[RMDB]
RNA sequence: GGGAACGACUCGAGUAGAGUCGAAAAGAUUCGGGGGCGAGGCAUUGCUUGUAGCCUUAAUAAUAUAAAUUGAUGGCUUCGUCUCACGCGCCUGGCGCAAGCGUUGCUGCAUGCUCUCCAGCAGCUACCUGCUAUGGUAUUUCGAUACCAUAGCAGGAAAAGAAACAACAACAACAAC
Reactivity to 2A3 in 0.01 (KOAc 150mM, MgCl2 10mM, bicine 150mM(pH8.5), 24C), signal-to-noise 3, nucleotides 027 to 126: g140a110u150u150c070g000g000g000g000g020c020g000a030g000g000c010a030u110u190g000c010u030u030g010u040a100g010c000c000u040u040a040a020u120a070a020u130a030u130a100a120a120u080u130g070a060u120g040g000c000u140u130c060g020u020c040u060c130a060c050g030c030g000c010c030u060g010g000c010g000c000a000a010g000c000g010u020u030g000c000u010g020c010a040u210g040c010u020c030u010c040c030a020g010c010a000g000c000u070a100
Reactivity to DMS in 0.01 (KOAc 150mM, MgCl2 10mM, bicine 150mM(pH8.5), 24C), signal-to-noise 4, nucleotides 027 to 126: g010a210u010u000c160g010g000g000g000g000c040g000a160g000g020c000a060u000u000g020c050u000u000g000u000a090g030c000c020u000u010a060a050u010a100a100u010a110u000a070a080a150u000u000g000a120u000g010g000c000u010u010c050g030u010c110u020c130a060c040g040c300g000c030c030u010g010g010c020g020c040a000a040g000c010g020u000u000g010c010u000g010c050a210u000g000c030u000c010u020c050c060a120g000c080a070g000c130u000a120